An RNA of 207 nucleotides, treated with 2A3 and DMS and read out base by base. DMS adducts were read by reverse transcription with MarathonRT.

RNA sequence: GGGAACGACUCGAGUAGAGUCGAAAAUUCUUCACUGUCGUGUGACGCUUCACGAAGACCUCAUAUUGUCACGACUGAUGCUCUCAUUCGUACCGUCGCUAAAAGAUCACGACUGUAUUUCUAUUCGACUAUUGCCCAAAGAGUGUGAAGUAUGACGCUCUUUAGUCGAGUUCGCUCGACUAAAGAGAAAAGAAACAACAACAACAAC
Reactivity to 2A3 in 0.01 (KOAc 150mM, MgCl2 10mM, bicine 150mM(pH8.5), 24C), signal-to-noise 5, nucleotides 027 to 156: u070u040c010u070u060c020a020c060u050g000u020c000g010u010g040u060g100a040c070g010c010u060u080c040a020c070g070a090a090g020a110c010c050u090c060a100u130a080u190u220g080u070c050a030c090g060a040c060u040g030a060u120g030c000u000c010u010c040a130u130u040c040g000u000a030c020c030g020u020c000g000c060u120a090a100a060a110g070a160u070c050a010c050g020a000c000u020g030u010a060u000u110u000c070u050a120u040u090c000g010a010c030u040a040u160u130g070c020c000c050a020a050a020g120a040g030u110g000u010g040a030a020g010u070a040u140g030a000c040g030
Reactivity to DMS in 0.01 (KOAc 150mM, MgCl2 10mM, bicine 150mM(pH8.5), 24C), signal-to-noise 2, nucleotides 027 to 156: u010u010c030u010u000c020a180c050u010g050u000c050g000u000g060u000g010a180c070g010c060u000u010c020a110c050g010a120a110g010a100c040c030u000c060a060u010a110u010u000g000u010c090a050c050g010a160c050u010g000a060u000g040c030u000c090u000c130a130u000u000c080g020u010a050c070c040g030u000c020g020c050u010a030a060a070a070g000a130u010c100a070c030g000a040c030u000g010u000a070u000u020u000c040u000a220u000u000c040g000a090c040u000a100u000u000g050c060c010c010a110a040a150g000a080g020u000g030u000g030a010a010g020u000a050u000g000a170c050g020
High DMS reactivity at an A or C suggests that its Watson-Crick edge is free. For DMS, 2,968 sequencing reads were counted.